[RMDB]
RNA sequence: GGGAACGACUCGAGUAGAGUCGAAAACUCACUCACUACGGUGAGUGAGAAUCUUAAGGCUCAAUAAAGCUUGCCUUGAGGUCCCUCAAGCAGAUAUAGACUGAAACAUUUAGUACGUACAAGCAGGGAGCAACGGCUCGAGUACGCUCGAGCCGAAAAUUACUCCGAGUUUCGACUCGGAGUAAUUAAAAGAAACAACAACAACAAC
Reactivity to 2A3 in 0.01 (KOAc 150mM, MgCl2 10mM, bicine 150mM(pH8.5), 24C), signal-to-noise 1, nucleotides 027 to 156: c000u000c000a000c000u020c000a010c000u000a000c190g130g000u000g030a000g010u000g010a000g000a000a030u000c000u020u020a020a000g020g000c000u020c170a080a140u220a300a230a060g080c080u090u060g000c000c000u000u000g010a000g030g030u010c010c010c020u020c060a030a020g060c020a040g070a060u070a070u110a300g140a060c020u060g060a060a080a060c030a040u000u150u180a050g020u110a000c100g020u020a010c020a060a000g030c060a060g090g000g000a070g050c050a190a000c020g010g020c030u020c000g000a000g020u000a060c280g030c060u000c000g010a020g000c030c000g010a000a020